RNA sequence: GGGAACGACUCGAGUAGAGUCGAAAAAAGGUUGAACUUCACCGACACUUACAUGGCACCAGACUCCAGAGGAGUAUUCUUACAAUGGACAAAAUACGACCUCAACAGCUCAUUUACCAUCGUCCAAUGCUCGAUCCUCAUUCGUGAGGAUCGAGCAAAAAGAAACAACAACAACAAC
Reactivity to DMS in 0.01 (KOAc 150mM, MgCl2 10mM, bicine 150mM(pH8.5), 24C), signal-to-noise 1, nucleotides 027 to 126: a070a050g000g030u000u010g010a120a080c090u000u000c010a110c050c020g020a070c130a170c120u000u000a030c170a070u000g000g030c050a030c040c000a070g000a060c010u010c040c110a120g000a170g020g050a300g020u010a010u000u000c000u000u010a120c170a070a090u030g020g000a070c090a150a040a000a040u000a020c000g010a050c090c000u000c040a000a130c180a050g020c080u000c010a030u000u000u000a160c110c040a020u000c140g000u040c000c040a010a070

Record summary
The data come from the RNA Mapping Database (RMDB), library OK2TST. An RNA of 177 nucleotides, treated with DMS and read out base by base. For DMS the reverse transcriptase was MarathonRT. The RNA was probed in 150 mM KOAc, 10 mM MgCl2 and 150 mM bicine (pH 8.5) at 24 C.